[RMDB]
RNA sequence: GGGAACGACUCGAGUAGAGUCGAAAAGGGGUCAAGAGCGCACUACUUGGAUUUAUCAGAUGGAGACCACCUGAAGCCUCCACGGGUGGUCGUUGAAAUCUGAUUGUCAGUAGUGAUGCUCUUGACGGAGGCACCCAAACCAUCGUUCGCGAUGGAACAAUCCUCGUGUGUUCGCACACGAGGAUUGAAAAGAAACAACAACAACAAC
Reactivity to 2A3 in 0.01 (KOAc 150mM, MgCl2 10mM, bicine 150mM(pH8.5), 24C), signal-to-noise 1, nucleotides 027 to 156: g050g000g030g010u010c000a000a010g010a000g000c000g010c030a000c000u040a010c030u140u240g170g020a060u210u270u150a040u060c000a000g000a030u030g000g020a030g000a040c000c000a030c000c000u020g060a060a040g040c040c020u110c040c000a010c010g000g040g000u000g000g000u000c000g000u060u050g020a000a000a000u000c000u000g010a000u020u010g030u030c070a050g020u030a020g020u010g000a030u080g000c000u010c000u000u000g000a000c000g020g000a010g000g000c030a060c000c000c000a030a060a060c010c000a000u010c000g050u100u100c300g010c030g120a010u000g000g010a000a020